[RMDB]
RNA sequence: GGGAACGACUCGAGUAGAGUCGAAAAUGAACUUGGAGUCACCGCGACCGUGCUCGGUCAGCAGCACCGCCAGCGCCUGCGGGGUGGACCGAUCGCCGGACAGCACGAUGGCCCGGCCGCCGCGGCGAAGCGCAACUAAUUUCGAUUAGUUGCGCUUAAAAGAAACAACAACAACAAC
Reactivity to DMS in 0.01 (KOAc 150mM, MgCl2 10mM, bicine 150mM(pH8.5), 24C), signal-to-noise 5, nucleotides 027 to 126: u010g000a090a080c080u000u010g010g000a130g010u000c020a070c040c070g010c050g030a080c040c040g010u000g020c130u000c060g010g000u000c030a090g020c100a110g000c060a080c020c040g000c040c050a100g000c060g010c050c040u010g020c000g000g000g010g030u000g000g000a050c030c020g000a050u010c080g010c050c020g010g020a080c080a080g010c080a060c100g000a080u010g000g000c000c030c010g010g010c010c040g000c020c020g010c030g010g000c050g000
Reactivity to 2A3 in 0.01 (KOAc 150mM, MgCl2 10mM, bicine 150mM(pH8.5), 24C), signal-to-noise 1, nucleotides 027 to 126: u070g000a030a020c020u050u100g080g020a060g050u010c010a010c020c020g020c030g050a040c020c040g060u100g060c030u050c070g010g000u030c020a020g010c030a010g030c000a030c040c000g020c040c020a090g040c030g060c020c060u140g010c030g020g040g010g020u030g000g030a040c000c010g030a050u070c040g000c010c010g020g060a060c040a020g070c010a020c100g080a080u050g020g000c000c000c010g060g010c000c030g060c020c000g020c030g010g000c010g020